[RMDB]
The record gives the reactivity of an RNA of 207 nucleotides to 2A3 and DMS. The 2A3 profile rests on 3,433 reads. DMS adducts were read by reverse transcription with MarathonRT. Source: RMDB library OK3TST, as collected in RNAgym. The reactions ran in a buffer of 150 mM KOAc, 10 mM MgCl2 and 150 mM bicine (pH 8.5), at 24 C.
RNA sequence: GGGAACGACUCGAGUAGAGUCGAAAACUGUUGAUGAUCGAUUGGGAAUUAUCACACAAGUCGGUGAGCGUGAGUCAUUUCCUGCCCCAUAUUACAUUGCACAAAUAGCAUCAACGGAGUCAUUUAGUGAUACUCGUGCUGUAGAGUUUGCGGCUGGUCAGCGAAUGUAAUUCGUUACAUUCGCUGAAAAAGAAACAACAACAACAAC
Reactivity to 2A3 in 0.01 (KOAc 150mM, MgCl2 10mM, bicine 150mM(pH8.5), 24C), signal-to-noise 5, nucleotides 027 to 156: c030u030g020u030u010g030a050u000g000a040u030c050g080a120u070u250g060g010g010a080a100u050u040a040u080c010a010c000a000c010a140a040g070u060c030g020g060u120g030a010g000c060g020u130g030a010g030u010c000a050u040u030u030c000c000u020g040c010c000c010c000a010u030a030u090u080a050c080a050u050u140g030c040a010c020a040a060a110u110a050g020c030a040u040c030a050a080c060g060g000a030g040u050c030a020u080u110u170a100g020u050g040a020u040a080c020u030c050g040u060g010c030u010g030u050a050g010a040g110u010u090u100g020c000g000g020c030u050g010g100
Reactivity to DMS in 0.01 (KOAc 150mM, MgCl2 10mM, bicine 150mM(pH8.5), 24C), signal-to-noise 3, nucleotides 027 to 156: c030u000g010u000u000g030a040u010g000a060u000c020g010a230u000u010g030g020g010a160a080u000u000a090u000c040a090c060a040c050a090a170g020u010c040g010g020u000g000a300g010c050g000u000g000a080g010u010c040a070u000u000u000c000c010u000g000c030c010c020c020a110u010a080u000u010a080c070a120u010u000g010c010a060c030a050a060a090u010a040g010c130a050u010c010a070a110c040g000g000a120g020u000c060a070u010u000u000a050g010u000g000a100u010a060c010u000c030g050u000g010c000u010g040u000a060g010a080g010u000u000u000g030c070g000g040c000u010g020g000